[RMDB]
RNA sequence: GGGAACGACUCGAGUAGAGUCGAAAAUUUCAUGGAGCCUGGCUGUUUUAUUCAAUGUAUGUGUUUUAUUUCUACUAGAACAGAGUUCAUGAGAGGGUCAGUUUGUGACCCGCGCUUUCCGGCGCAUGUGUUGUCGAAAGCGACACAGCCACACAUAGUCCUUUUAAAUAUUCGUAUUUAAAAGGACAAAAGAAACAACAACAACAAC
Reactivity to 2A3 in 0.01 (KOAc 150mM, MgCl2 10mM, bicine 150mM(pH8.5), 24C), signal-to-noise 1, nucleotides 027 to 156: u040u060u000c010a020u090g040g080a050g060c060c080u020g030g000c020u000g070u030u040u030u180a040u190u130c070a060a050u030g040u050a000u050g060u030g000u010u020u030u000a100u020u170u040c090u070a110c000u040a000g000a010a000c010a020g090a050g180u050u120c010a010u020g000a010g020a010g040g020g000u000c050a040g030u080u290u280g110u100g000a000c000c000c000g020c000g000c000u030u060u000c210c070g000g000c000g040c020a050u250g070u010g010u290u250g000u000c030g030a010a000a030g030c010g060a000c010a000c000a070g010c000c010a060c000a010c010a060u060a000
Reactivity to DMS in 0.01 (KOAc 150mM, MgCl2 10mM, bicine 150mM(pH8.5), 24C), signal-to-noise 3, nucleotides 027 to 156: u000u010u010c030a070u000g000g000a090g040c060c050u010g010g040c020u020g010u000u000u010u020a090u010u010c060a080a090u000g020u000a060u010g010u000g020u000u000u000u000a070u020u030u000c060u000a060c100u000a120g010a060a080c030a070g000a170g010u000u000c050a070u000g000a120g010a050g020g010g030u000c000a050g050u000u010u000g010u020g020a020c000c000c000g010c010g010c030u000u010u010c090c040g020g000c020g020c040a100u010g000u000g020u010u010g010u000c010g010a070a070a210g030c030g020a080c050a030c040a060g030c030c050a060c030a020c050a070u000a220